Record summary
Structure probing data (2A3 and DMS) for a 177-nucleotide construct. The reactions ran in a buffer of 150 mM KOAc, 10 mM MgCl2 and 150 mM bicine (pH 8.5), at 24 C. The DMS profile rests on 1,855 reads. Values are in units of 0.01, from 0 to 300, in steps of 10. Source: RMDB library OK2TST, as collected in RNAgym.
RNA sequence: GGGAACGACUCGAGUAGAGUCGAAAAGGCCGCGUAAUCGUGCCGGCCUCGUCGAAGGUGCUGCGCAGCAAGAUCGUGGGCCCUGUCAUCAUCGGUGAGGAUGUGAUUAUUGAAGACGCUUACAUCGGAUGGAUACUGGGUUCGCCCAGUAUCCAUCAAAAGAAACAACAACAACAAC
Reactivity to 2A3 in 0.01 (KOAc 150mM, MgCl2 10mM, bicine 150mM(pH8.5), 24C), signal-to-noise 2, nucleotides 027 to 126: g010g030c000c030g000c010g070u090a130a100u120c100g050u060g040c020c000g020g000c000c000u010c010g140u050c050g040a070a040g070g000u100g040c010u000g000c030g070c000a040g010c050a060a130g050a130u080c030g000u060g010g080g000c000c000c000u070g050u050c020a070u050c000a010u020c020g040g050u070g070a060g070g060a060u040g000u030g080a100u000u200a090u020u150g070a050a030g050a010c070g000c060u060u040a030c030a100u110c080g030
Reactivity to DMS in 0.01 (KOAc 150mM, MgCl2 10mM, bicine 150mM(pH8.5), 24C), signal-to-noise 2, nucleotides 027 to 126: g010g010c000c030g010c110g030u000a130a060u000c130g000u020g020c050c020g020g000c000c020u010c020g000u000c120g030a090a090g020g020u020g030c040u000g010c090g000c040a190g020c090a070a090g000a060u010c050g030u000g000g000g010c020c040c030u050g000u000c040a040u000c050a040u000c040g000g000u000g000a100g000g000a060u000g000u000g000a030u000u000a160u000u030g020a110a120g000a060c070g020c040u000u010a070c080a110u000c090g030